[RMDB]
RNA sequence: GGGAACGACUCGAGUAGAGUCGAAAAUUGCGUCAUGAGUAAGGCCGAGAUUGGCAUCAGAGAUCGUUACGAUAUCAUGUGUUAUCGUGAGGCGCUAUCUGUGAGUAUCGGAACUGACAGCAGGGCCGUCGAUAUGGACGUUCGCGUUCGUAUUGACAAAAGAAACAACAACAACAAC
Reactivity to 2A3 in 0.01 (KOAc 150mM, MgCl2 10mM, bicine 150mM(pH8.5), 24C), signal-to-noise 9, nucleotides 027 to 126: u070u050g010c010g010u010c010a030u100g040a020g110u110a080a040g070g000c000c000g010a020g010a070u070u130g080g020c020a040u050c010a010g020a000g010a060u090c010g020u040u080a010c010g000a000u000a000u020c140a170u260g300u150g010u100u010a010u000c010g000u010g050a140g080g000c010g000c030u020a020u010c000u000g040u010g030a010g010u030a030u030c010g000g020a030a040c010u020g020a010c010a020g010c000a000g010g020g020c010c030
Reactivity to DMS in 0.01 (KOAc 150mM, MgCl2 10mM, bicine 150mM(pH8.5), 24C), signal-to-noise 9, nucleotides 027 to 126: u030u010g010c040g010u000c020a040u030g000a120g010u020a110a100g010g010c010c010g000a000g000a120u040u020g000g010c050a070u020c030a030g000a050g000a050u010c020g010u000u020a030c010g000a020u000a010u010c030a170u030g020u050g010u010u000a010u000c010g000u000g000a090g010g000c030g000c060u000a060u010c010u000g010u010g000a070g010u010a090u000c050g000g000a070a080c040u000g000a050c080a100g020c090a040g000g000g010c060c060
The record gives the reactivity of an RNA of 177 nucleotides to 2A3 and DMS. 2A3 adducts were read by reverse transcription with SuperScript II with manganese. For DMS, 237,021 sequencing reads were counted. It was measured as part of the RMDB library OK1LIB.